[RMDB]
RNA sequence: GGGAACGACUCGAGUAGAGUCGAAAAGAUAUGGAACUGCAGACAUGCCUUGACAUCGGAAACGAUGUACAGGCAACAGCUGUUUCCUAAGUCAAAACCUAGCAAAGGCUUCGGCCUUUGCUAGGAAGCUUUGAUUAGAGUUCGCUCUAAUCAAAGCAAAAGAAACAACAACAACAAC
Reactivity to 2A3 in 0.01 (KOAc 150mM, MgCl2 10mM, bicine 150mM(pH8.5), 24C), signal-to-noise 2, nucleotides 027 to 126: g030a000u050a040u090g000g010a010a040c050u050g030c010a000g060a180c090a230u150g000c010c000u060u130g010a000c010a000u010c000g030g010a070a080a040c000g010a000u010g000u050a140c010a000g010g000c000a000a000c020a000g030c000u020g050u070u070u000c000c000u030a140a040g030u030c030a000a020a110a230c000c000u000a000g000c030a010a000a010g040g000c010u160u270c300g130g000c000c000u000u020u000g000c000u000a000g000g010a000a020
Reactivity to DMS in 0.01 (KOAc 150mM, MgCl2 10mM, bicine 150mM(pH8.5), 24C), signal-to-noise 2, nucleotides 027 to 126: g000a040u010a290u010g000g000a030a010c080u010g000c010a060g020a100c300a170u000g000c000c020u000u000g030a010c000a000u000c000g000g010a050a080a200c010g010a010u000g020u000a100c030a040g020g010c010a020a080c170a150g000c000u000g000u000u000u000c000c010u010a030a110g020u000c030a060a090a080a150c000c000u000a000g000c000a000a000a000g010g020c020u000u000c210g010g010c010c000u000u000u010g020c010u000a010g000g000a020a050
Record summary
This 177-nucleotide RNA was probed chemically with 2A3 and DMS. The RNA was probed in 150 mM KOAc, 10 mM MgCl2 and 150 mM bicine (pH 8.5) at 24 C. The data come from the RNA Mapping Database (RMDB), library TTRDEL.